Source information: The record gives the reactivity of an RNA of 177 nucleotides to DMS and 2A3. For DMS the reverse transcriptase was MarathonRT. Values cover nucleotides 27 to 126. The RNA was probed in 150 mM KOAc, 10 mM MgCl2 and 150 mM bicine (pH 8.5) at 24 C. It was measured as part of the RMDB library OK2TRN. For 2A3 the reverse transcriptase was SuperScript II with manganese.

RNA sequence: GGGAACGACUCGAGUAGAGUCGAAAAAUGCGCGACGGCGCGGCCGCGUACACAUUAACCCCUCGGCCGAUAAUUCAUGCUGUUGCCCCUGAUUAUAGGUUGGAACAUAACCCAAAGAGGCUUGAGGAAUGGUACUGGAUUUCGAUCCAGUACCAUUAAAAGAAACAACAACAACAAC
Reactivity to DMS in 0.01 (KOAc 150mM, MgCl2 10mM, bicine 150mM(pH8.5), 24C), signal-to-noise 3, nucleotides 027 to 126: a100u000g020c030g020c050g020a080c060g000g030c040g010c100g020g050c030c020g010c080g020u020a100c180a070c120a080u010u000a120a180c050c000c040c040u010c030g010g000c010c000g000a120u000a050a060u010u010c130a060u020g000c060u000g030u000u000g020c030c050c020c030u000g000a110u020u000a070u000a040g020g000u000u000g020g020a070a070c130a080u010a060a050c040c010c060a030a070a090g020a150g000g000c020u000u020g000a070g000g000
Reactivity to 2A3 in 0.01 (KOAc 150mM, MgCl2 10mM, bicine 150mM(pH8.5), 24C), signal-to-noise 1, nucleotides 027 to 126: a010u080g000c050g030c000g020a100c050g000g070c080g000c000g070g050c010c000g010c020g060u160a050c120a030c040a220u200u300a160a140c000c000c000c000u030c030g030g010c040c000g000a000u040a020a080u120u080c040a060u150g080c000u060g020u200u030g020c030c000c000c000u060g050a070u010u160a080u090a130g030g100u050u030g040g000a040a000c020a080u110a020a010c000c010c000a000a040a000g110a010g000g000c000u090u160g030a010g000g020